[RMDB]
RNA sequence: GGGAACGACUCGAGUAGAGUCGAAAAAAAGGCAUCACGAACAACUUCAUAUUCAACUUCUUUCCAACCUUUCAUGGAUCUUUCAACAAGAACUUGUGGAGAAGUGGCAAAUGCUUUGUUACACAAGGAGCUAGCGACCGUUCGCGGUCGCUAGCUCAAAAGAAACAACAACAACAAC
Reactivity to 2A3 in 0.01 (KOAc 150mM, MgCl2 10mM, bicine 150mM(pH8.5), 24C), signal-to-noise 1, nucleotides 027 to 126: a010a010a010g000g000c000a000u020c000a000c060g050a080a000c060a010a010c000u070u070c130a000u140a170u300u020c080a020a020c050u000u000c000u190u000u070c000c000a000a030c050c000u070u210u120c020a160u210g050g000a000u000c000u080u020u000c050a110a060c140a030a000g000a020a190c000u000u000g000u000g030g000a000g000a130a050g000u000g000g040c100a040a040a040u210g000c000u110u000u110g300u230u100a140c150a000c000a000a000g000